[RMDB]
RNA sequence: GGGAACGACUCGAGUAGAGUCGAAAAGCUCUGCAAGACAGAUCGAACAACAAAGAGAGAUCGAAAAUCUUAGAGGAGAGAACGAAUCUGUCGACUUCACUAGGACAUUGUCGAUCAGAGGUCCAAAGACGAUUCAUGGCUUCGGCUAUGGAUCGUCAAAAGAAACAACAACAACAAC
Reactivity to DMS in 0.01 (KOAc 150mM, MgCl2 10mM, bicine 150mM(pH8.5), 24C), signal-to-noise 9, nucleotides 027 to 126: g010c000u000c000u010g000c080a030a170g010a030c050a080g000a020u000c010g010a300a200c040a050a110c260a090a130a090g000a060g000a300g000a020u010c020g000a080a110a110a190u010c010u000u000a020g000a080g000g000a020g000a100g000a120a020c020g010a100a100u050c090u030g000u000c000g010a290c010u000u000c010a090c030u000a010g000g010a020c130a090u030u010g000u000c020g010a300u010c010a010g000a020g010g000u010c000c020a060a090a080
Reactivity to 2A3 in 0.01 (KOAc 150mM, MgCl2 10mM, bicine 150mM(pH8.5), 24C), signal-to-noise 9, nucleotides 027 to 126: g020c000u000c000u010g020c040a000a030g010a010c010a010g010a010u010c010g040a060a050c030a050a030c040a030a300a010g110a020g000a000g000a020u020c020g060a050a040a020a040u000c000u000u010a010g010a030g030g010a010g000a010g030a060a020c020g030a060a130u140c120u160g100u050c020g060a120c000u020u010c010a010c030u020a010g000g020a010c020a120u080u130g030u010c010g000a020u080c010a000g010a010g030g050u000c010c010a040a030a010
The data come from the RNA Mapping Database (RMDB), library OK1LIB.
The record gives the reactivity of an RNA of 177 nucleotides to DMS and 2A3.
Conditions: 150 mM KOAc, 10 mM MgCl2 and 150 mM bicine (pH 8.5), 24 C.
2A3 adducts were read by reverse transcription with SuperScript II with manganese.
High 2A3 reactivity points to a flexible backbone, as in loops and unpaired stretches.
For 2A3, 79,049 sequencing reads were counted.